[RMDB]
RNA sequence: GGGAACGACUCGAGUAGAGUCGAAAAUGCCGGCUUCGGCCGGCAAAAAAGGGGUCCUCUUAGCGUAAGAGCUUUGAUCUUACUGAAGCCUCCACGGUAAGGGAGCUUAUCGCACAAGAGGACGGAGGCACCCAAAAAACCCAAGUUCGCUUGGGAAGAGAGUGUCUUGAUUCGUCAAGACACUCUCAAAAGAAACAACAACAACAAC
Reactivity to 2A3 in 0.01 (KOAc 150mM, MgCl2 10mM, bicine 150mM(pH8.5), 24C), signal-to-noise 2, nucleotides 027 to 156: u050g010c020c000g010g000c060u090u150c260g160g000c010c030g000g300c030a060a060a050a000a000a130g100g000g080g000u000c010c010u000c000u000u010a010g000c030g080u140a270a280g050a020g190c060u300u130u080g080a060u050c000u010u020a010c020u000g070a080a000g010c000c010u000c000c000a000c000g000g000u000a000a000g000g020g000a010g010c000u120u150a300u300c000g040c000a160c000a190a000g000a000g000g000a000c020g010g010a000g010g000c000a030c000c000c000a040a020a000a000a000a060c040c000c020a020a000g010u070u140c220g020c110u010u000g000g030g040a080a000